Annotation
Chemical mapping of a 177-nucleotide RNA with DMS and 2A3. For DMS, 1,451 sequencing reads were counted. Values cover nucleotides 27 to 126. It was measured as part of the RMDB library M2PK50. The RNA was probed in 150 mM KOAc, 10 mM MgCl2 and 150 mM bicine (pH 8.5) at 24 C.
RNA sequence: GGGAACGACUCGAGUAGAGUCGAAAAAAGGACUGGUUCGCCAGUCCUUAUUCAUACGUACGCAACGAAGCGUAAGUCAUUACGCAAAUGACUAAAAGCGUAUACGAAAGGACUUCGGUCCUUUCAAGGAGUUCUUAACAUUCGUGUUAAGAACUCCAAAAGAAACAACAACAACAAC
Reactivity to DMS in 0.01 (KOAc 150mM, MgCl2 10mM, bicine 150mM(pH8.5), 24C), signal-to-noise 2, nucleotides 027 to 126: a000a010g010g010a000c010u000g000g000u000u020c190g020c000c000a000g030u000c010c000u000u000a000u000u000c050a080u010a070c130g010u000a030c000g030c010a110a160c140g030a150a170g030c000g010u000a100a020g000u000c160a000u000u000a090c260g000c100a030a060a020u000g020a040c070u000a090a060a060a120g020c000g000u000a010u010a070c180g000a000a010a010g000g000a040c000u000u020c140g020g000u000c000c010u000u000u000c000a090a080
Reactivity to 2A3 in 0.01 (KOAc 150mM, MgCl2 10mM, bicine 150mM(pH8.5), 24C), signal-to-noise 2, nucleotides 027 to 126: a000a000g020g000a000c000u010g000g040u060u060c130g030c040c000a010g020u000c000c000u000u000a010u000u020c000a000u000a010c020g030u010a000c020g000c030a100a060c170g170a160a050g030c000g020u000a030a000g050u060c010a070u010u040a050c090g010c110a030a080a050u070g040a020c040u070a000a070a050a020g010c010g000u020a020u030a060c080g000a000a000a000g000g010a000c000u040u060c220g060g000u000c000c010u010u000u000c000a000a040